[RMDB]
RNA sequence: GGGAACGACUCGAGUAGAGUCGAAAAUACUCGUGCGAGUAAUCCACGAUCGCUACACGGCAUUAAGCAAUGGAAGUGACCCUUGAGGGAAGCAAUUCUGCAGAGACACUUCCACCCUGGGGUGGCGUCAUCGGAUUACACCGUCGCGUUACAGGGACAAUAUGUUGCAGUUCGCUGCAACAUAUUGAAAAGAAACAACAACAACAAC
Reactivity to 2A3 in 0.01 (KOAc 150mM, MgCl2 10mM, bicine 150mM(pH8.5), 24C), signal-to-noise 5, nucleotides 027 to 156: u120a010c010u010c050g030u050g020c020g000a040g040u000a000a010u000c000c010a030c080g020a080u160c050g010c010u020a010c030a030c030g050g010c080a130u180u250a100a040g030c050a060a120u050g000g010a010a000g000u010g040a070c050c020c000u040u050g060a180g030g040g030a030a020g060c070a020a190u070u020c010u110g060c050a020g010a000g020a080c000a000c000u000u000c000c000a020c010c010c010u110g000g000g060g010u000g010g000c000g010u020c010a030u090c050g010g000a000u000u020a010c010a080c030c010g140u170c030g000c010g000u020u000a080c070a090g040g010g060a010
Reactivity to DMS in 0.01 (KOAc 150mM, MgCl2 10mM, bicine 150mM(pH8.5), 24C), signal-to-noise 2, nucleotides 027 to 156: u000a040c030u000c010g020u010g010c030g000a200g010u010a060a070u000c000c020a100c040g020a080u010c010g000c000u000a030c000a100c010g020g050c060a160u000u020a100a120g020c130a100a090u000g000g000a050a020g020u000g000a180c000c000c000u010u020g030a130g020g010g010a030a160g020c220a070a200u000u000c030u000g010c050a080g010a050g000a090c080a060c010u010u000c000c000a030c010c000c020u040g010g010g020g040u020g050g000c060g000u000c030a060u000c070g040g010a080u000u000a030c020a080c050c040g010u010c050g020c010g030u000u000a080c050a070g000g000g030a300